[RMDB]
RNA sequence: GGGAACGACUCGAGUAGAGUCGAAAAGUGAGUGUGGCCCACGUGGGCGGCGUGGACCCCGAAGCCUCGCAGAGCACGGUGGAAAUGCGCGAAAGCCUGCUGCGCGAGACUCUGCGCCUGCUGAAGCGCAUGGGGUGUGGUUCGCCACACCCCAUGCAAAAGAAACAACAACAACAAC
Reactivity to DMS in 0.01 (KOAc 150mM, MgCl2 10mM, bicine 150mM(pH8.5), 24C), signal-to-noise 2, nucleotides 027 to 126: g000u000g000a030g060u000g040u000g010g040c020c010c030a040c110g020u010g020g010g010c060g010g000c000g000u000g010g020a080c000c000c010c060g000a150a100g000c000c000u000c020g030c020a050g000a080g000c040a030c070g020g010u010g000g020a120a070a050u010g010c090g020c020g010a100a210a200g010c020c040u000g000c030u000g040c140g010c000g000a050g000a060c050u000c050u000g000c010g010c030c010u000g000c010u020g000a120a200g020c110
Reactivity to 2A3 in 0.01 (KOAc 150mM, MgCl2 10mM, bicine 150mM(pH8.5), 24C), signal-to-noise 2, nucleotides 027 to 126: g120u080g020a090g060u210g020u120g090g020c010c000c000a010c030g030u140g070g080g020c060g010g000c010g020u020g000g010a020c000c010c010c020g070a060a000g020c000c000u030c000g010c060a010g020a010g050c030a010c100g000g000u020g010g060a130a190a100u180g050c070g000c010g080a100a040a000g030c020c030u040g020c050u080g010c010g000c000g020a030g030a020c030u020c020u080g000c000g010c020c020u070g010c030u090g080a090a010g060c030